The record gives the reactivity of an RNA of 177 nucleotides to DMS and 2A3. DMS adducts were read by reverse transcription with MarathonRT.
RNA sequence: GGGAACGACUCGAGUAGAGUCGAAAAAUACACACGGAGAUGGGGAAAUAAAACGAACAAAAAGAAAACAUUCUUUUCUCUGACGAAGAGUAAAGCGCAAGGAAUAUCAGACCGAAUUCAGAAAUGAAUUCAGCUUCAUUUUCGAAUGAAGCUGAAUAAAAGAAACAACAACAACAAC
Reactivity to DMS in 0.01 (KOAc 150mM, MgCl2 10mM, bicine 150mM(pH8.5), 24C), signal-to-noise 5, nucleotides 027 to 126: a070u040a080c080a050c100a150c070g000g020a050g000a040u000g020g000g000g010a060a080a080u020a040a060a090a090c130g000a090a040c140a050a040a070a070a060g000a080a060a090a080c220a090u020u000c010u000u000u010u010c010u010c020u010g010a080c160g000a090a040g010a030g020u010a020a020a010g000c260g000c060a040a030g000g000a060a060u010a040u010c080a030g000a080c060c050g020a030a030u020u010c010a040g000a050a040a110u020g010a060
Reactivity to 2A3 in 0.01 (KOAc 150mM, MgCl2 10mM, bicine 150mM(pH8.5), 24C), signal-to-noise 5, nucleotides 027 to 126: a000u120a010c030a010c010a000c030g030g010a040g020a030u050g010g000g050g080a040a040a040u200a020a100a030a020c100g080a060a040c060a050a060a050a010a000g110a070a050a010a000c040a060u100u020c000u010u010u010u010c020u000c010u050g040a050c130g080a060a010g010a000g010u030a030a070a010g010c050g030c100a030a020g050g050a070a060u060a040u090c010a010g060a060c000c050g020a020a010u100u020c000a010g060a090a060a030u110g030a020